RNA sequence: GGGAACGACUCGAGUAGAGUCGAAAAUCUUGUAGUAUCGUUGGAUCCGGCGAAGCACCUACCAAACUACGUUAAUUGUAAGUGUAUAAACCGUGUCUAUGCGGUCACCGACAACCUUCAUGUAGAGGUUAUAUGGGCUGUUCGCAGCCCAUAUAACAAAAGAAACAACAACAACAAC
Reactivity to 2A3 in 0.01 (KOAc 150mM, MgCl2 10mM, bicine 150mM(pH8.5), 24C), signal-to-noise 2, nucleotides 027 to 126: u040c020u000u130g040u050a060g010u020a030u080c010g000u000u020g030g000a010u000c000c050g030g000c020g030a060a000g020c010a040c010c020u050a020c040c090a070a170a050c030u200a040c200g190u140u090a190a110u150u060g000u020a050a000g010u020g010u010a040u070a140a100a010c010c020g000u000g030u120c020u050a040u150g020c000g000g000u000c070a010c000c050g020a020c010a040a040c020c030u180u170c090a140u110g090u260a040g030a030g220
Reactivity to DMS in 0.01 (KOAc 150mM, MgCl2 10mM, bicine 150mM(pH8.5), 24C), signal-to-noise 3, nucleotides 027 to 126: u010c070u010u010g020u010a060g040u000a010u000c010g050u010u000g000g000a040u010c260c020g000g000c010g000a130a270g000c020a000c010c050u000a030c060c290a080a060a140c160u020a080c250g010u020u010a080a160u000u000g020u000a000a080g010u000g000u020a020u000a050a170a050c010c000g000u000g000u000c040u010a060u020g020c030g010g010u000c050a050c040c060g000a090c070a010a040c030c050u000u010c090a080u000g020u010a080g000a120g000